[RMDB]
RNA sequence: GGGAACGACUCGAGUAGAGUCGAAAAUGUGAGUGUAGCCAAGGAUACACCUUGAAUGCCGACAAGAAAACGUGUUCAGGUGAGGCCUGUGUAGGGGGCCGUGACUGAAUCAAAUACUUGGGAACCUAUGCUCCAGGUUUUGGACUGGCCUUGUGCAAGCGCCAUUAAUAUUCGUAUUAAUGGCGCUAAAAGAAACAACAACAACAAC
Reactivity to DMS in 0.01 (KOAc 150mM, MgCl2 10mM, bicine 150mM(pH8.5), 24C), signal-to-noise 1, nucleotides 027 to 156: u030g010u000g000a050g050u010g040u000a030g000c030c010a060a110g040g020a220u010a160c050a080c050c010u010u000g010a040a060u000g000c000c080g030a290c060a110a190g010a110a100a080a080c140g000u000g020u000u010c010a000g010g000u000g010a040g000g030c030c000u000g020u010g040u000a210g000g060g010g020g000c000c030g030u010g010a140c030u000g010a070a280u000c020a070a070a050u020a080c030u000u000g040g020g040a060a060c120c090u000a100u010g020c050u000c020c030a050g010g020u000u000u000u000g000g000a040c100u000g020g000c030c000u010u010g000u000g010c030a050
Reactivity to 2A3 in 0.01 (KOAc 150mM, MgCl2 10mM, bicine 150mM(pH8.5), 24C), signal-to-noise 5, nucleotides 027 to 156: u120g030u040g030a060g020u040g020u040a010g040c030c010a020a010g020g010a030u040a130c030a050c020c010u050u110g040a080a010u100g040c040c040g080a070c050a060a060g080a070a130a020a010c040g020u040g010u060u020c020a010g030g000u010g070a130g020g020c010c020u050g020u030g030u140a050g040g080g000g000g000c010c000g010u010g050a050c010u030g030a020a010u040c020a020a070a050u130a070c020u020u020g030g000g020a010a010c020c010u040a040u090g030c000u040c010c000a000g030g020u020u020u110u140g040g020a040c020u030g040g010c060c020u140u200g060u240g030c130a070
This 207-nucleotide RNA was probed chemically with DMS and 2A3.
DMS (dimethyl sulfate) methylates the pairing face of unpaired adenines and cytosines.
The DMS profile rests on 2,025 reads.
The RNA was probed in 150 mM KOAc, 10 mM MgCl2 and 150 mM bicine (pH 8.5) at 24 C.